Source: RMDB library 15KREP, as collected in RNAgym. An RNA of 177 nucleotides, treated with DMS and 2A3 and read out base by base.

[RMDB]
RNA sequence: GGGAACGACUCGAGUAGAGUCGAAAAGCACCCUGGGACCCAGUAAUGCCCGGGGGGAGGCGGGGUAAACCCAUACCAUGGGAACUGCUGGGUCCCUCGGAUGUCGAUCCCCUCUCCCGUUCGGGAAGAAUAUACACAGCUUCGGCUGUGUAUAUUCAAAAGAAACAACAACAACAAC
Reactivity to DMS in 0.01 (KOAc 150mM, MgCl2 10mM, bicine 150mM(pH8.5), 24C), signal-to-noise 1, nucleotides 027 to 126: g000c030a050c030c000c010u010g000g000g030a030c010c010c010a030g000u010a040a100u000g020c000c000c000g000g020g000g000g000g010a030g030g040c160g010g000g000g030u010a110a110a240c010c020c010a190u010a140c010c030a120u010g000g020g000a070a010c150u000g030c020u000g000g000g000u000c010c000c000u000c090g010g000a040u000g010u000c030g010a160u000c010c000c000c170u020c070u000c000c000c000g000u020u010c060g000g000g010a060a070
Reactivity to 2A3 in 0.01 (KOAc 150mM, MgCl2 10mM, bicine 150mM(pH8.5), 24C), signal-to-noise 1, nucleotides 027 to 126: g000c000a010c000c000c000u000g000g000g000a010c010c000c000a000g010u040a050a080u120g020c040c000c000g000g020g010g020g030g040a090g070g140c160g010g060g000g010u100a110a130a120c000c010c010a030u110a050c030c030a020u110g000g000g000a030a030c020u030g030c000u000g010g030g000u000c000c000c000u000c000g020g010a130u040g070u090c010g010a070u020c000c010c000c000u040c010u020c020c000c010g040u070u050c030g000g000g000a030a000
For DMS the reverse transcriptase was MarathonRT.